About this RNA
The data come from the RNA Mapping Database (RMDB), library OK3TST. An RNA of 207 nucleotides, treated with 2A3 and DMS and read out base by base. The RNA was probed in 150 mM KOAc, 10 mM MgCl2 and 150 mM bicine (pH 8.5) at 24 C. 2A3 is a SHAPE reagent: it acylates the 2'-hydroxyl of flexible nucleotides of all four kinds. Reactivities are given for positions 27 through 156.

[RMDB]
RNA sequence: GGGAACGACUCGAGUAGAGUCGAAAAGAGGGCGCUGGCGUACAUGCCGCAGAUGUCGUAGACGUAAAUAGGUUCCGACAGGAGUCCGAUGUAAGAUGGGUAGCAGCGCCCGCCACGAAUGCUACUUCUGACGUAGUCGUACAUUUCGUUGGAUGGAGAAACAUAGAACGUUCGCGUUCUAUGUUUCAAAAGAAACAACAACAACAAC
Reactivity to 2A3 in 0.01 (KOAc 150mM, MgCl2 10mM, bicine 150mM(pH8.5), 24C), signal-to-noise 2, nucleotides 027 to 156: g090a010g000g000g020c010g000c020u040g070g040c040g100u190a040c100a050u230g090c060c020g100c000a020g010a130u100g020u060c020g030u040a060g010a120c030g010u190a000a160a050u130a110g080g000u090u040c020c000g020a100c190a090g020g030a100g090u010c040c060g000a030u130g070u100a030a070g090a150u070g080g050g020u090a050g050c020a050g030c030g010c040c000c000g000c000c000a030c020g060a050a000u140g040c040u020a000c000u040u050c030u060g050a090c150g020u080a020g000u020c000g000u020a010c030a030u130u050u070c080g010u080u140g000g040a130u080g010g060a090
Reactivity to DMS in 0.01 (KOAc 150mM, MgCl2 10mM, bicine 150mM(pH8.5), 24C), signal-to-noise 1, nucleotides 027 to 156: g050a130g000g060g080c000g000c030u010g000g090c040g040u000a060c090a050u030g050c040c000g000c080a100g010a100u000g010u000c010g000u010a100g000a040c010g010u000a020a240a190u040a200g030g020u000u000c020c030g030a150c170a110g000g010a230g040u000c020c010g030a060u000g000u000a140a040g020a120u010g010g030g040u010a170g010c000a060g000c000g000c000c000c130g040c010c020a130c030g000a020a030u000g010c040u000a070c030u020u000c060u000g070a150c170g110u020a100g030u000c030g050u000a010c070a030u000u040u010c000g020u030u010g000g000a130u040g000g000a300